Chemical mapping of a 177-nucleotide RNA with DMS. Source: RMDB library RFMREP, as collected in RNAgym. Conditions: 150 mM KOAc, 10 mM MgCl2 and 150 mM bicine (pH 8.5), 24 C.
RNA sequence: GGGAACGACUCGAGUAGAGUCGAAAAGCCAUGGCGUUAGUAUGAGUGUCGUGCAGCCUCCAGGCCCCCCCCUCCCGGGAGAGCCAUAGUGGUCUGCGGAACCGGUGAGUACACCGGAAUCGCUGGGGACUACACCAUACUUCGGUAUGGUGUAGUCAAAAGAAACAACAACAACAAC
Reactivity to DMS in 0.01 (KOAc 150mM, MgCl2 10mM, bicine 150mM(pH8.5), 24C), signal-to-noise 1, nucleotides 027 to 126: g010c040c020a060u000g010g010c300g000u010u060a160g040u000a070u000g010a100g030u000g020u000c070g060u000g030c000a070g010c080c010u000c060c050a130g000g000c000c000c000c050c000c000c010c010u000c020c010c010g000g000g000a080g020a080g000c000c030a110u010a050g010u020g010g000u010c010u000g000c000g010g000a090a240c010c020g020g000u000g000a300g030u000a120c020a000c010c010g020g030a010a080u000c010g000c000u000g010g020g010